[RMDB]
RNA sequence: GGGAACGACUCGAGUAGAGUCGAAAACGCGACCGCAGCAGGAGCAUUGACCAGUCUUCCGACCGUAGGCGACUGCCGAUUCCAUUGGCUUUUCGAACAUCUUCAGGAUAUCGCCAUACUCUGUGUCUCGUUUGUCGGUAUUCGUACCGACAAACGAAAAAGAAACAACAACAACAAC
Reactivity to DMS in 0.01 (KOAc 150mM, MgCl2 10mM, bicine 150mM(pH8.5), 24C), signal-to-noise 2, nucleotides 027 to 126: c080g030c080g020a090c070c050g000c050a060g010c030a130g020g000a140g000c090a060u000u000g000a110c050c040a110g000u020c050u000u010c060c080g000a040c090c040g020u000a110g030g000c250g000a070c080u020g010c050c050g000a090u000u000c140c060a120u010u000g010g000c040u000u000u000u000c050g000a090a060c120a040u000c080u000u000c120a090g010g000a090u000a040u000c040g000c040c020a080u010a100c020u010c070u000g000u000g010u010c030
Reactivity to 2A3 in 0.01 (KOAc 150mM, MgCl2 10mM, bicine 150mM(pH8.5), 24C), signal-to-noise 1, nucleotides 027 to 126: c030g030c020g060a060c020c020g070c070a020g020c000a000g060g030a010g060c020a060u040u150g090a070c020c010a020g000u000c030u120u000c030c030g060a060c020c050g030u040a020g020g060c030g000a050c040u030g000c150c040g060a040u140u000c030c020a030u020u030g030g000c000u030u000u090u140c020g010a060a060c020a120u050c020u180u140c040a000g010g040a060u030a040u150c040g000c020c010a000u040a070c030u040c030u070g020u000g110u050c020
Structure probing data (DMS and 2A3) for a 177-nucleotide construct. The 2A3 profile rests on 1,363 reads. The RNA was probed in 150 mM KOAc, 10 mM MgCl2 and 150 mM bicine (pH 8.5) at 24 C.